[RMDB]
RNA sequence: GGGAACGACUCGAGUAGAGUCGAAAAAUCUAUAAAUCGACAGCGACGUUCUGCCGGGAUACCGACGGAAUUUCAGACAAGCCAAAGGGUAAUAGCUUUGGUUGACCUACACCGAAAAGGAAAUAGGCAAAAAGCGAUUGUUCGCAAUCGCUUUUUGAAAAGAAACAACAACAACAAC
Reactivity to 2A3 in 0.01 (KOAc 150mM, MgCl2 10mM, bicine 150mM(pH8.5), 24C), signal-to-noise 2, nucleotides 027 to 126: a000u060c090u040a150u080a150a150a120u120c040g030a020c060a070g040c020g050a020c010g020u030u000c010u070g000c000c020g000g000g010a080u120a300c020c020g010a020c000g040g010a010a080u030u080u110c120a130g050a110c030a070a000g050c000c000a000a010a010g010g000g000u000a000a040u020a070g040c000u010u010u010g000g000u030u050g000a010c000c000u050a020c060a020c020c030g060a110a040a200a000g000g000a020a070a020u050a040g010g000
Reactivity to DMS in 0.01 (KOAc 150mM, MgCl2 10mM, bicine 150mM(pH8.5), 24C), signal-to-noise 3, nucleotides 027 to 126: a030u010c040u070a140u020a080a070a090u030c080g000a080c090a140g000c090g030a040c050g000u010u000c030u030g000c020c000g000g000g000a120u050a090c030c020g000a070c030g020g020a060a020u010u000u020c030a090g000a060c180a110a070g000c000c000a010a000a000g010g010g000u000a090a040u040a300g000c010u000u020u000g020g010u000u000g010a080c050c010u000a060c150a300c070c030g020a040a030a120a090g000g000a040a070a180u010a030g010g000